[RMDB]
RNA sequence: GGGAACGACUCGAGUAGAGUCGAAAAAAUCGAGAGAAAACUGGCUCUCCCUUAGCCAUCCGAGUGGACGUUCGUCCUCCUUCGGAUGCCCAGGUCGGACCGCGGGGAGGUGGAGAUGCCAUGCCGACAACAAAGAGAUCUUCGGAUCUCUUUGUUGAAAAGAAACAACAACAACAAC
Reactivity to DMS in 0.01 (KOAc 150mM, MgCl2 10mM, bicine 150mM(pH8.5), 24C), signal-to-noise 2, nucleotides 027 to 126: a070a050u000c040g000a110g010a140g010a090a050a090a140c100u000g020g010c010u000c010u000c000c020c010u000u000a120g040c300c030a060u010c010c000g010a020g030u010g000g010a020c030g000u020u010c180g010u000c010c030u010c080c110u000u000c000g020g000a010u000g010c020c010c030a080g070g010u000c130g020g000a300c060c080g000c070g000g020g020g010a060g020g000u000g030g010a040g010a030u030g010c000c020a000u010g010c050c000g010a140
Reactivity to 2A3 in 0.01 (KOAc 150mM, MgCl2 10mM, bicine 150mM(pH8.5), 24C), signal-to-noise 1, nucleotides 027 to 126: a000a050u170c030g020a030g000a000g060a120a100a000a010c050u010g000g000c040u000c020u010c000c000c010u060u040a040g060c070c010a000u000c000c010g000a010g010u070g040g000a020c050g110u180u140c090g000u240c000c010u040c020c030u110u030c010g000g000a000u000g000c030c000c000a050g000g050u050c060g100g110a070c040c030g010c140g060g020g000g010a050g030g030u160g020g030a060g010a040u200g020c000c020a010u050g030c000c000g000a020